RNA sequence: GGGAACGACUCGAGUAGAGUCGAAAAUGCGCGCCAAGCUCGCUCAGCAGCAUGCCUACCUCAAGGAGACAAGCAAGCAGCACGCGGCGUACCGCAACCUGAUCGUGCGCAACCUGGACCGGCCGGCGACGCUAUCAUACUUCGGUAUGAUAGCGUCAAAAGAAACAACAACAACAAC
Reactivity to 2A3 in 0.01 (KOAc 150mM, MgCl2 10mM, bicine 150mM(pH8.5), 24C), signal-to-noise 2, nucleotides 027 to 126: u020g000c010g000c010g010c010c010a050a010g000c030u090c090g040c040u030c040a060g000c020a000g020c000a000u080g040c000c000u080a130c020c030u120c060a090a070g070g000a030g010a040c030a100a000g020c030a050a020g000c030a000g010c010a030c080g010c030g010g030c010g020u040a080c000c040g050c020a030a050c000c020u030g060a110u100c030g010u010g030c000g000c010a030a050c000c000u050g000g030a050c030c030g000g030c030c000g010g040c030
Reactivity to DMS in 0.01 (KOAc 150mM, MgCl2 10mM, bicine 150mM(pH8.5), 24C), signal-to-noise 2, nucleotides 027 to 126: u020g000c030g070c040g030c010c030a080a140g000c070u000c160g020c020u000c020a040g030c060a070g000c040a070u010g000c010c050u010a130c030c070u000c150a130a110g000g000a050g010a040c040a040a100g030c040a090a100g020c050a080g000c010a030c110g000c080g010g000c060g050u000a070c110c070g010c050a070a100c030c010u000g000a020u000c050g010u000g000c000g010c060a060a070c050c050u010g000g000a080c070c050g010g000c000c040g000g000c170